[RMDB]
RNA sequence: GGGAACGACUCGAGUAGAGUCGAAAAGAUAUGGAUAUAUCACCUGAUUCUAUGAAGUCGGAAACGAUGGAGAAUUGGGUGAGUAUAUCCUAAGUCAAACUAACUUGGACUUCGGUCCAAGUUAGAACAAGUGGAUGUAGUUCGCUACAUCCACUUGAAAAGAAACAACAACAACAAC
Reactivity to 2A3 in 0.01 (KOAc 150mM, MgCl2 10mM, bicine 150mM(pH8.5), 24C), signal-to-noise 3, nucleotides 027 to 126: g040a020u090a040u200g010g000a000u010a000u000a000u030c000a000c000c000u000g000a020u000u000c030u040a300u290g020a020a010g010u010c020g010g050a070a040a020c010g000a010u030g040g030a030g000a000a000u010u010g010g010g000u000g000a000g000u000a000u000a000u000c010c000u000a120a000g060u020c050a070a040a120c000u010a000a000c000u000u010g000g010a000c000u050u100c300g060g000u010c000c000a000a000g000u010u000a000g010a020a020
Reactivity to DMS in 0.01 (KOAc 150mM, MgCl2 10mM, bicine 150mM(pH8.5), 24C), signal-to-noise 4, nucleotides 027 to 126: g010a040u000a300u010g000g000a020u010a010u000a030u000c010a020c000c000u000g000a010u000u000c000u000a260u030g000a110a150g000u000c000g000g000a160a100a210c010g010a010u000g000g000a020g010a000a010u000u010g010g000g000u000g000a040g020u010a010u000a010u000c000c000u000a030a110g020u000c040a140a090a270c010u000a010a010c000u000u000g000g000a020c000u000u010c170g040g010u000c000c000a000a000g010u000u000a000g000a120a200